[RMDB]
RNA sequence: GGGAACGACUCGAGUAGAGUCGAAAAUCAACUAGUGUAGGCUUUGCUUAUCUUUGACAGAAGAGAAAACACUUCCUAGCUUUUAGCACCCAGUUUUACUCAAGAGUAAGCAAGGUCCUGUGAAUCACCCAUAAUUCAACUUCGGUUGAAUUAUGGGAAAAGAAACAACAACAACAAC
Reactivity to 2A3 in 0.01 (KOAc 150mM, MgCl2 10mM, bicine 150mM(pH8.5), 24C), signal-to-noise 2, nucleotides 027 to 126: u090c010a020a060c050u110a110g080u040g090u270a020g020g010c000u010u000u020g000c010u040u000a090u180c010u130u060u200g160a110c110a070g150a180a030g090a060g060a020a030a060a000c060a030c000u110u130c010c030u040a140g000c060u170u190u100u300a050g000c020a050c030c040c030a070g020u040u010u020u100a130c000u000c000a010a000g010a020g070u010a010a010g030c010a000a000g000g030u120c000c010u020g020u010g100a050a050u070c040a080
Reactivity to DMS in 0.01 (KOAc 150mM, MgCl2 10mM, bicine 150mM(pH8.5), 24C), signal-to-noise 2, nucleotides 027 to 126: u020c050a070a120c120u010a090g030u030g000u000a130g010g000c030u000u000u010g010c000u000u010a020u020c000u000u000u000g020a110c240a180g000a150a150g030a040g000a040a050a040a020c080a070c140u000u010c110c050u010a060g010c110u000u000u000u000a070g040c060a150c030c060c050a090g020u000u010u000u000a060c040u000c020a080a070g000a060g020u000a010a010g000c010a040a070g000g010u000c010c040u010g000u020g010a080a100u010c110a170